[RMDB]
About this RNA:
Structure probing data (2A3 and DMS) for a 177-nucleotide construct. It was measured as part of the RMDB library OK2TRN. For 2A3, 17,267 sequencing reads were counted. Reactivities are rounded to 0.1 and cut off at 0 and 3.

RNA sequence: GGGAACGACUCGAGUAGAGUCGAAAAGAGAUCGAGACCCGCUUCCAUGCAGCGCUUGCGUACCCGGGGGAGAUGAUCGGCACGGUGGCGGCGCAGUCCAUCGGCGAGCCCACGACGCAGAUGACGCGUAAAAGUGAAGUUUCGACUUCACUUUUACAAAAGAAACAACAACAACAAC
Reactivity to 2A3 in 0.01 (KOAc 150mM, MgCl2 10mM, bicine 150mM(pH8.5), 24C), signal-to-noise 6, nucleotides 027 to 126: g040a000g010a070u070c040g010a020g080a140c010c020c020g010c060u090u000c030c020a070u130g030c030a030g020c030g000c060u110u130g010c020g040u080a120c010c030c000g000g000g010g030g000a090g020a090u190g030a050u080c010g060g030c050a030c110g060g000u030g020g000c020g030g000c070g000c040a010g040u030c020c000a030u020c010g010g000c010g010a020g030c010c010c000a030c030g060a020c020g000c010a000g020a170u090g030a100c030g010c030
Reactivity to DMS in 0.01 (KOAc 150mM, MgCl2 10mM, bicine 150mM(pH8.5), 24C), signal-to-noise 9, nucleotides 027 to 126: g010a120g010a070u010c030g000a110g000a140c040c030c020g010c060u000u000c040c040a090u010g010c080a100g010c060g010c050u000u000g010c040g010u000a100c110c080c030g000g010g000g010g010a130g000a090u010g010a080u000c040g020g020c040a100c040g010g010u000g000g010c060g010g010c080g010c080a100g000u010c040c020a030u000c020g010g010c020g010a110g010c020c010c010a070c070g010a080c030g010c030a050g000a070u000g010a090c100g010c130